[RMDB]
RNA sequence: GGGAACGACUCGAGUAGAGUCGAAAAGAUAUGGAGAGAAGGGAGAGCUUUGGUCGGAAACGACCACAGCUCGAGGAUCUUCCUCCUAAGUCAAAGCCCAUAUCUUGGUUCGCCAAGAUAUGGGCAAGAACUACGCAUGGUUCGCCAUGCGUAGUUCAAAAGAAACAACAACAACAAC
Reactivity to DMS in 0.01 (KOAc 150mM, MgCl2 10mM, bicine 150mM(pH8.5), 24C), signal-to-noise 1, nucleotides 027 to 126: g000a040u000a300u000g000g000a030g020a240g010a020a010g000g000g010a020g000a030g000c000u000u000u000g000g010u000c000g000g000a050a050a140c000g030a010c000c000a000c040a000g020c000u000c000g000a040g000g000a060u000c000u000u010c020c000u000c010c000u010a010a120g000u000c030a070a100a190g030c000c000c000a000u010a010u000c000u000u000g000g000u000u020c230g000c000c000a010a000g000a010u000a000u000g010g000g020c000a000a010
An RNA of 177 nucleotides, treated with DMS and read out base by base.
It was measured as part of the RMDB library TTRDEL.
The RNA was probed in 150 mM KOAc, 10 mM MgCl2 and 150 mM bicine (pH 8.5) at 24 C.